RNA sequence: GGGAACGACUCGAGUAGAGUCGAAAAUUAGGAAACUGAGUAAGGUACACCGCGCCGAGAAACCAGAACCAACUGAUCGCCAUAAUGGACUGGAAAAUGGCGCGAUCACGUUUGGCUAUGCGGAGUACCUACUCAUACUGUUCGCAGUAUGAGUAGGAAAAGAAACAACAACAACAAC
Reactivity to 2A3 in 0.01 (KOAc 150mM, MgCl2 10mM, bicine 150mM(pH8.5), 24C), signal-to-noise 5, nucleotides 027 to 126: u090u050a040g030g080a130a040a030c070u080g040a020g120u100a140a050g040g000u010a020c030a010c020c000g000c000g030c010c020g110a100g110a100a060a030c040c030a020g060a080a050c010c010a010a000c020u030g000a030u040c020g000c030c010a010u060a100a100u170g120g080a100c130u130g130g030a080a050a020a060u060g040g020c100g000c030g030a000u010c010a020c100g010u050u060u060g020g000c040u030a060u200g020c010g010g000a010g010u010a010
Reactivity to DMS in 0.01 (KOAc 150mM, MgCl2 10mM, bicine 150mM(pH8.5), 24C), signal-to-noise 7, nucleotides 027 to 126: u000u010a100g010g010a100a090a130c070u000g010a070g000u010a100a060g010g010u000a020c020a130c010c000g010c020g020c110c070g000a120g000a090a100a180c080c060a100g010a070a100c010c020a020a040c040u000g000a020u000c010g000c020c020a040u010a080a110u010g020g000a200c140u000g000g010a070a070a080a040u000g010g010c070g020c070g000a010u000c010a020c270g000u000u000u000g010g000c060u000a080u000g020c010g010g010a130g020u000a040
This 177-nucleotide RNA was probed chemically with 2A3 and DMS. It was measured as part of the RMDB library OK2TST. The RNA was probed in 150 mM KOAc, 10 mM MgCl2 and 150 mM bicine (pH 8.5) at 24 C. 2A3 adducts were read by reverse transcription with SuperScript II with manganese.